[RMDB]
RNA sequence: GGGAACGACUCGAGUAGAGUCGAAAAGGGUUUUGCGAUCUUUAAGCAGAUGGCAGGUUCACCCCGUACGGUGCGGAAGUUCGCGCUUCCGUGAAACGCGAAAAUCCGACGGUGGCUGCAAGUCGCAUUGAAGGGAUCGCCUUCGGGCGAUCCCUAAGUUGCGUCAUCUAUUCGUAGAUGACGCAACAAAAGAAACAACAACAACAAC
Reactivity to 2A3 in 0.01 (KOAc 150mM, MgCl2 10mM, bicine 150mM(pH8.5), 24C), signal-to-noise 1, nucleotides 027 to 156: g020g000g010u050u020u000u100g050c010g000a080u090c040u090u170u090a060a020g040c040a050g000a200u230g050g000c020a010g110g000u140u170c030a080c000c000c000c000g000u010a130c040g000g000u040g020c020g010g030a010a010g050u140u240c140g030c000g040c090u010u010c010c000g000u040g070a010a060a070c200g000c050g050a000a000a000a100u100c000c000g000a010c010g000g140u150g030g010c000u040g030c050a080a020g010u050c010g060c030a040u040u050g040a010a000g020g000g000a000u000c000g010c040c040u130u140c200g010g000g000c000g000a000u000c010c000c010u020a030a030
The record gives the reactivity of an RNA of 207 nucleotides to 2A3. Reactivities are given for positions 27 through 156. The RNA was probed in 150 mM KOAc, 10 mM MgCl2 and 150 mM bicine (pH 8.5) at 24 C. Source: RMDB library M2RFPK, as collected in RNAgym. For 2A3 the reverse transcriptase was SuperScript II with manganese.